The record gives the reactivity of an RNA of 177 nucleotides to 2A3 and DMS.

[RMDB]
RNA sequence: GGGAACGACUCGAGUAGAGUCGAAAAGAUAUGGACAAGCUCGACGAUCGUCACAUCGGAAACGAUGUAAGACGGGAGAGUGUCCUAAGUCAAAACAUGACAGUUCCGUUCGCGGAACUGUCAUGAACGUCCUCUUUAGCUUCGGCUAAAGAGGACGAAAAGAAACAACAACAACAAC
Reactivity to 2A3 in 0.01 (KOAc 150mM, MgCl2 10mM, bicine 150mM(pH8.5), 24C), signal-to-noise 1, nucleotides 027 to 126: g010a000u090a030u180g020g010a010c030a100a100g120c030u030c030g300a300c050g080a280u090c030g030u000c010a000c000a040u000c010g000g000a070a070a060c020g000a000u020g010u020a130a000g020a000c000g000g030g030a050g010a020g030u110g030u000c000c000u040a300a030g050u040c030a010a010a040a160c000a000u000g000a010c000a000g000u010u000c040c050g010u080u080c300g000c060g170g000a000a000c000u010g020u000c000a000u000g000a000a010
Reactivity to DMS in 0.01 (KOAc 150mM, MgCl2 10mM, bicine 150mM(pH8.5), 24C), signal-to-noise 1, nucleotides 027 to 126: g040a020u010a300u010g000g000a020c000a050a080g040c010u000c000g000a160c150g000a060u000c000g000u010c100a080c000a010u000c000g040g000a110a150a100c010g010a000u000g020u010a060a110g000a060c000g000g000g000a020g010a010g000u000g010u010c000c000u020a060a100g000u000c040a100a140a080a210c000a000u000g000a030c000a000g020u000u000c000c020g010u000u040c250g020c020g020g000a000a000c000u000g000u000c000a000u000g000a060a100

2A3 adducts were read by reverse transcription with SuperScript II with manganese.